[RMDB]
RNA sequence: GGGAACGACUCGAGUAGAGUCGAAAAGUUCUUUAGACAUUAAAAGCUUCUAACAUGAUAUGGAAUCCGAGGUUCCGAUAUCACAUUAGAAGCUUUUUUGUUAGCGGAGCCUUGUUCGCAAGGCUCCUCUAAUGGGUGGAUUCGUCCACCCAUUAGAAAAAGAAACAACAACAACAAC
Reactivity to DMS in 0.01 (KOAc 150mM, MgCl2 10mM, bicine 150mM(pH8.5), 24C), signal-to-noise 1, nucleotides 027 to 126: g000u010u000c000u000u000u000a180g010a000c000a020u000u000a010a000a000a000g000c000u000u000c000u000a000a010c100a150u010g000a010u000a000u000g000g000a010a000u010c020c130g020a100g040g010u000u000c000c000g010a030u000a000u000c000a000c060a170u000u000a010g010a000a020g000c000u010u000u000u000u000u000g000u000u000a090g010c150g020g010a010g010c000c000u000u000g000u000u000c200g020c000a010a000g010g000c000u000c000c000
Chemical mapping of a 177-nucleotide RNA with DMS. Values are in units of 0.01, from 0 to 300, in steps of 10. Conditions: 150 mM KOAc, 10 mM MgCl2 and 150 mM bicine (pH 8.5), 24 C.